Source: RMDB library M2PK50, as collected in RNAgym. The record gives the reactivity of an RNA of 177 nucleotides to 2A3 and DMS. Reactivities are rounded to 0.1 and cut off at 0 and 3.

RNA sequence: GGGAACGACUCGAGUAGAGUCGAAAACGACAGACGUUCGCGUCUGUCGAAAUACCGAGGUUGUUGCUCGGUAAAUAACAACAACCCUUGGAAUCAAGGGAAAAAGGAGAUGGUUCGCCAUCUCCAACUUAAAGAUCGAGUUCGCUCGAUCUUUAAGAAAAGAAACAACAACAACAAC
Reactivity to 2A3 in 0.01 (KOAc 150mM, MgCl2 10mM, bicine 150mM(pH8.5), 24C), signal-to-noise 1, nucleotides 027 to 126: c020g000a010c000a000g030a000c020g040u070u060c190g010c000g120u000c010u000g020u010c000g000a000a000a020u100a000c000c010g000a000g040g050u080u050g020u080u080g060c000u000c000g020g000u000a020a000a020u040a010a000c050a020a000c010a050a130c000c010c000u000u000g040g070a220a160u300c020a040a010g000g010g000a060a030a050a000a000g000g010a000g000a000u010g000g080u050u100c180g000c060c000a000u010c000u000c000c010a000a000
Reactivity to DMS in 0.01 (KOAc 150mM, MgCl2 10mM, bicine 150mM(pH8.5), 24C), signal-to-noise 3, nucleotides 027 to 126: c020g020a010c000a000g020a000c000g040u000u010c260g040c020g030u010c000u000g020u000c000g000a020a040a100u010a120c000c000g000a020g010g010u000u010g010u000u000g010c010u000c010g010g010u000a010a030a060u010a070a060c070a030a100c120a100a120c000c000c000u010u000g010g020a230a120u010c020a000a020g010g000g010a010a030a030a090a070g000g010a020g010a000u000g010g010u000u020c240g040c020c010a000u000c010u000c000c000a020a010
Record summary: For 2A3 the reverse transcriptase was SuperScript II with manganese. DMS (dimethyl sulfate) methylates the pairing face of unpaired adenines and cytosines. 2A3 is a SHAPE reagent: it acylates the 2'-hydroxyl of flexible nucleotides of all four kinds. For DMS the reverse transcriptase was MarathonRT.